[RMDB]
RNA sequence: GGGAACGACUCGAGUAGAGUCGAAAAUACAAUUAUUACUUCCUGCCAAACUGCUGUUAGUAAGCUUCUAGAUACAUGUUUUGAAGCUACAGAAGCAACAUUUAACUUCUUGUUAGAUUUGGCAGGACAACUCUGCGGUUCGCCGCAGAGAAAAGAAACAACAACAACAAC
Reactivity to 2A3 in 0.01 (KOAc 150mM, MgCl2 10mM, bicine 150mM(pH8.5), 24C), signal-to-noise 4, nucleotides 027 to 129: u100a000c050a030a130u170u060a050u070u080a160c060u040u000c000c000u000g000c000c000a000a000a000c030u030g010c020u000g080u170u030a050g020u030a170a030g010c000u000u000c050u030a010g010a050u090a080c070a140u200g100u030u080u010u050g010a010a000g010c000u020a010c000a000g040a060a000g010c030a050a080c010a060u080u100u070a020a030c030u070u050c080u140u170g050u050u090a030g030a220u020u000u000g000g000c010a000g000g000a000c000a020a000
Reactivity to DMS in 0.01 (KOAc 150mM, MgCl2 10mM, bicine 150mM(pH8.5), 24C), signal-to-noise 3, nucleotides 027 to 129: u050a060c180a060a020u000u010a120u060u030a160c120u000u000c000c000u000g090c010c030a000a060a070c230u000g010c030u000g010u060u050a000g040u030a030a170g010c040u000u000c030u010a070g020a040u040a200c300a120u000g000u000u010u030u010g020a020a000g020c000u030a040c020a080g010a130a000g020c020a000a200c230a020u000u000u000a030a040c010u080u010c210u040u070g000u000u000a030g040a080u000u000u000g050g070c000a000g000g000a000c300a040a070